This 177-nucleotide RNA was probed chemically with DMS and 2A3. For 2A3 the reverse transcriptase was SuperScript II with manganese. The 2A3 profile rests on 1,181 reads. The RNA was probed in 150 mM KOAc, 10 mM MgCl2 and 150 mM bicine (pH 8.5) at 24 C. Values cover nucleotides 27 to 126.
RNA sequence: GGGAACGACUCGAGUAGAGUCGAAAAUUUCUGUCGGCGGUAGCGUCCCGACCCUUGUUUAUGUUCGCCCGAUCAGUGAAAGGCCGAUUCGUGUAUCGUUAAACACGAAAUCGGGAGAUUUAUCCUACUAGACCUCAUGUUUCGACAUGAGGUCUAGAAAAGAAACAACAACAACAAC
Reactivity to DMS in 0.01 (KOAc 150mM, MgCl2 10mM, bicine 150mM(pH8.5), 24C), signal-to-noise 1, nucleotides 027 to 126: u000u000u000c010u000g010u020c040g000g000c120g000g030u000a140g000c080g010u000c050c000c040g010a080c030c040c040u010u000g000u000u010u000a080u030g020u000u000c040g020c040c050c060g040a070u000c060a110g010u000g000a130a110a050g000g030c060c000g010a040u000u000c040g060u000g000u000a040u000c060g010u000u030a070a010a030c010a010c010g010a000a220a020u000c020g000g000g000a040g000a010u000u040u000a070u010c010c010u010a210
Reactivity to 2A3 in 0.01 (KOAc 150mM, MgCl2 10mM, bicine 150mM(pH8.5), 24C), signal-to-noise 2, nucleotides 027 to 126: u030u020u000c000u050g060u050c030g010g100c060g000g030u080a050g100c020g100u100c060c000c000g070a060c000c030c030u120u150g130u210u300u070a170u300g040u020u020c020g000c020c030c010g040a020u030c100a100g030u070g180a020a000a020g010g040c010c010g010a020u010u000c020g000u000g000u000a010u030c020g040u050u210a030a110a000c010a000c010g000a000a000a000u020c000g000g090g000a030g000a010u090u050u120a040u060c000c000u040a100